[RMDB]
RNA sequence: GGGAACGACUCGAGUAGAGUCGAAAAACUCGCCGCCGCCUUCGAGAAGUUCGAGAAGACCGUGGCCCGCGCCGCCGCGACGCGCGACUGGGAUUGCUGGGUGCAGCACUACACCCCCGACGUCGAACCAUUUCACGAUCUUCGGAUCGUGAAAUGGAAAAGAAACAACAACAACAAC
Reactivity to DMS in 0.01 (KOAc 150mM, MgCl2 10mM, bicine 150mM(pH8.5), 24C), signal-to-noise 1, nucleotides 027 to 126: a060c060u000c060g010c030c000g000c000c070g070c010c010u000u000c070g000a220g060a020a260g010u040u000c080g010a190g050a030a110g000a030c000c020g020u000g000g000c030c000c020g020c060g010c000c060g050c090c000g000c080g000a100c120g000c080g000c040g000a030c070u020g000g000g000a060u010u000g040c000u000g000g000g020u000g000c080a040g010c000a050c020u000a090c090a060c010c000c000c060c010g030a030c070g000u000c030g000a090a110
Reactivity to 2A3 in 0.01 (KOAc 150mM, MgCl2 10mM, bicine 150mM(pH8.5), 24C), signal-to-noise 3, nucleotides 027 to 126: a020c020u010c030g000c000c000g000c000c010g000c000c020u020u010c040g020a040g070a150a080g070u130u090c020g030a030g040a130a070g100a060c010c030g000u060g030g010c000c040c010g040c010g010c010c030g020c000c000g050c010g010a060c030g040c000g000c000g060a060c030u090g060g000g040a080u020u090g030c050u090g010g020g030u130g040c020a030g020c000a020c020u040a010c040a050c040c020c000c010c000g070a030c030g070u040c010g040a040a010

Background:
Conditions: 150 mM KOAc, 10 mM MgCl2 and 150 mM bicine (pH 8.5), 24 C. Structure probing data (DMS and 2A3) for a 177-nucleotide construct. 2A3 is a SHAPE reagent: it acylates the 2'-hydroxyl of flexible nucleotides of all four kinds. The DMS profile rests on 1,632 reads.